Notes
The record gives the reactivity of an RNA of 207 nucleotides to 2A3. The 2A3 profile rests on 812 reads. The RNA was probed in 150 mM KOAc, 10 mM MgCl2 and 150 mM bicine (pH 8.5) at 24 C. High 2A3 reactivity points to a flexible backbone, as in loops and unpaired stretches. Source: RMDB library OK3TST, as collected in RNAgym.

RNA sequence: GGGAACGACUCGAGUAGAGUCGAAAAUCAGGAUGGGAAAGCAUGCGGCGUCCACAAGUGUCCAGUCCAUCCGAAACGUACGGCUAGGAUGGGAAAGCAUGCUAGAUCUGCGACCACGCGAGCCUAGGUGCACUUCUCCUCUGGCGUAAUGUCGUUCAGUUCCGGCAAUAUUCGUAUUGCCGGAACUAAAAGAAACAACAACAACAAC
Reactivity to 2A3 in 0.01 (KOAc 150mM, MgCl2 10mM, bicine 150mM(pH8.5), 24C), signal-to-noise 1, nucleotides 027 to 156: u080c060a070g030g010a030u020g020g000g020a110a050a080g030c050a070u070g040c070g030g000c030g100u130c050c020a070c000a080a150g020u020g030u000c040c020a020g020u020c000c000a010u000c000c000g000a000a040a000c080g050u220a020c050g060g090c030u050a060g090g000a030u050g020g010g000a020a010a010g010c000a000u040g190c000u000a000g000a040u010c090u150g030c020g070a090c100c060a100c100g030c000g010a020g040c030c020u000a010g000g010u030g000c070a100c240u040u000c010u010c030c010u020c060u040g050g000c030g070u070a070a100u000g000u070c030g000u050u030c040